[RMDB]
RNA sequence: GGGAACGACUCGAGUAGAGUCGAAAAGUACUAUGCCCGCCAUUAUUGAUGCAUGCUCCACCUCCCACUCCAUAAUAGUUGCUUUGAAGUUUCCUUUCGGUGGGUUCUGCAGCGUCUUUAUCAGAAACCUACCUGUCAAAUUCGUUUGACAGGUAGGAAAAGAAACAACAACAACAAC
Reactivity to DMS in 0.01 (KOAc 150mM, MgCl2 10mM, bicine 150mM(pH8.5), 24C), signal-to-noise 2, nucleotides 027 to 126: g010u000a070c070u020a030u000g010c020c000c030g020c100c130a080u000u010a070u000u000g010a040u010g020c020a070u000g010c010u000c030c020a030c030c030u000c000c010c040a120c090u000c040c050a060u000a070a090u020a080g010u010u010g030c050u000u020u010g000a070a190g000u010u000u000c020c010u000u000u000c050g020g040u000g010g010g010u000u030c100u000g000c090a070g020c060g010u000c060u010u000u010a090u030c070a090g000a060a080a100